[RMDB]
RNA sequence: GGGAACGACUCGAGUAGAGUCGAAAAAUAGGCUUAUCAAGAGAGGUGGAGGGAUUGGCCCGAUGAAACCCGGCAGCCAGAAAUGGUGCCAAUACCUGCAGCGGAAACGUUGAAAGAUGAGCCGAUGGCGCGGUCUACUUCGGUAGACCGAAAAGAAACAACAACAACAAC
Reactivity to 2A3 in 0.01 (KOAc 150mM, MgCl2 10mM, bicine 150mM(pH8.5), 24C), signal-to-noise 9, nucleotides 027 to 129: a000u120a030g000g000c000u010u010a010u020c070a150a040g100a000g030a060g140g070u080g030g060a030g020g010g010a030u030u080g100g040c000c000c000g070a120u090g040a040a040a040c020c010c000g010g010c050a050g090c000c000a010g030a000a040a020u120g000g000u050g000c000c000a010a010u060a090c010c010u040g030c020a010g020c010g020g020a070a050a030c030g020u020u030g040a100a050a020g010a000u020g000a000g000c000c000g010a030u060g040g030c050g010
Reactivity to DMS in 0.01 (KOAc 150mM, MgCl2 10mM, bicine 150mM(pH8.5), 24C), signal-to-noise 6, nucleotides 027 to 129: a070u010a110g010g030c000u000u050a040u030c000a110a070g000a120g020a110g060g030u040g010g010a110g000g000g060a060u000u000g020g010c040c040c010g040a080u030g040a070a090a080c020c000c020g000g000c060a110g060c000c050a070g000a030a030a020u040g050g000u050g040c020c010a000a020u010a040c020c020u060g030c010a000g000c020g020g000a080a080a110c060g050u020u050g030a060a060a090g010a010u000g020a000g020c000c010g020a030u000g000g030c050g040